Source: RMDB library M2RFPK, as collected in RNAgym. This 207-nucleotide RNA was probed chemically with 2A3. The 2A3 profile rests on 1,881 reads. 2A3 adducts were read by reverse transcription with SuperScript II with manganese. Conditions: 150 mM KOAc, 10 mM MgCl2 and 150 mM bicine (pH 8.5), 24 C.
RNA sequence: GGGAACGACUCGAGUAGAGUCGAAAAUAGCGAAGUAGGAUUUUAUGCGUCAAGUGUUCACAGGCUGGGGAGUCGCCGUGAAACGAAAAGCAGAAAGCAUGCUGCUUACGAUAUAAUUUCCGCACCCAUAAGAAGUCUCUGUUCGCAGAGACUUCAAGUGCUUUCUUAUCUUCGGAUAAGAAAGCACAAAAGAAACAACAACAACAAC
Reactivity to 2A3 in 0.01 (KOAc 150mM, MgCl2 10mM, bicine 150mM(pH8.5), 24C), signal-to-noise 3, nucleotides 027 to 156: u130a020g070c040g060a120a030g040u110a090g030g020a020u010u020u010u010a030u030g010c000g010u040c090a050a030g020u060g030u210u010c000a010c050a090g020g030c020u090g010g040g030g020a100g110u120c050g000c000c000g010u010g000a020a000a020c020g000a020a020a020a000g000c020a000g070a070a100a010g110c060a030u180g050c000u000g000c000u000u000a010c010g010a000u010a000u010a120a030u000u020u030c010c000g000c020a030c020c010c000a010u070a080a080g010a000a000g000u000c000u020c010u000g040u040u060c140g000c050a010g000a000g010a000c000u000u000c000a000a000